The record gives the reactivity of an RNA of 207 nucleotides to DMS and 2A3. The data come from the RNA Mapping Database (RMDB), library M2RFPK. For 2A3 the reverse transcriptase was SuperScript II with manganese. The 2A3 profile rests on 3,734 reads.

RNA sequence: GGGAACGACUCGAGUAGAGUCGAAAAAGUUAGGUUCGCUAUGGUGCAACUCUUUAAGGCAAUAACGAACUAAUUCUAAGCAAGUAAUGGAGAAAUGCCAGGGUCUCUAUCUAGCCAUAAUAGUGCUGUAAGUGACUUAGAUUCGUCUAAGUCACAACCCCAUAAUGUAGUUCGCUACAUUAUGGGGAAAAGAAACAACAACAACAAC
Reactivity to DMS in 0.01 (KOAc 150mM, MgCl2 10mM, bicine 150mM(pH8.5), 24C), signal-to-noise 2, nucleotides 027 to 156: a100g010u010u000a070g030g000u000u010c000g010c020u010a010u000g000g040u000g000c020a110a120c130u000c160u020u010u000a090a090g040g000c030a080a040u000a030a040c020g010a050a020c030u000a020a090u000u010c060u010a080a090g010c070a120a120g020u010a080a080u000g000g010a060g010a060a070a070u000g000c020c060a100g020g060g010u000c030u000c040u000a030u000c050u000a060g030c000c030a070u010a050a140u010a050g030u010g000c010u000g040u000a050a130g000u000g020a030c000u010u000a000g010a060u000u010c300g000u000c000u000a000a010g010u000c010a000c010a020a100
Reactivity to 2A3 in 0.01 (KOAc 150mM, MgCl2 10mM, bicine 150mM(pH8.5), 24C), signal-to-noise 6, nucleotides 027 to 156: a010g060u070u050a060g020g050u010u010c020g000c040u020a040u070g130g100u090g100c050a120a160c040u090c140u160u250u230a110a050g060g010c000a030a060u060a080a040c010g010a000a010c020u010a010a000u070u060c060u090a070a040g060c060a050a020g050u170a120a050u070g030g000a030g030a070a070a040u080g030c020c030a040g000g010g020u020c000u000c000u040a070u060c030u050a000g010c000c010a040u050a200a050u050a120g100u060g030c060u040g050u120a140a080g010u000g000a000c000u000u000a000g000a010u020u020c030g010u000c100u010a000a000g000u000c000a000c000a000a000